[RMDB]
RNA sequence: GGGAACGACUCGAGUAGAGUCGAAAAGAUGGUAGAUAGAUAUAUACGUGCGCCGACGCAGUUCACUAAGACGGAGCUUGAUGCCGUAAACCUAUAUGUUGCCCAACAUAUUAUGUUAGAUGCAGCGGGCCUGCUUUAAUUUCGAUUAAAGCAGGCCAAAAGAAACAACAACAACAAC
Reactivity to 2A3 in 0.01 (KOAc 150mM, MgCl2 10mM, bicine 150mM(pH8.5), 24C), signal-to-noise 2, nucleotides 027 to 126: g070a000u010g000g180u080a110g000a040u000a020g150a010u000a100u020a000u010a170c100g040u090g000c030g070c000c020g050a020c010g000c120a020g020u130u090c000a000c050u070a100a000g040a050c040g030g000a000g000c040u040u160g040a090u050g030c000c020g020u040a000a110a200c000c020u000a040u000a080u080g000u020u090g010c000c000c010a000a050c020a010u100a030u140u250a080u060g100u090u090a000g000a200u100g100c060a020g050c130g080
Reactivity to DMS in 0.01 (KOAc 150mM, MgCl2 10mM, bicine 150mM(pH8.5), 24C), signal-to-noise 1, nucleotides 027 to 126: g010a050u040g000g000u000a020g000a140u000a110g000a010u000a050u060a030u000a020c200g030u010g000c020g010c010c080g000a070c050g060c110a050g000u020u010c000a080c060u040a070a230g030a060c060g060g000a070g020c000u000u000g000a080u050g040c000c070g020u000a030a060a150c000c020u000a020u000a010u000g000u010u010g000c010c080c050a110a080c000a000u000a020u010u020a050u020g000u000u000a080g020a120u060g030c020a070g000c020g060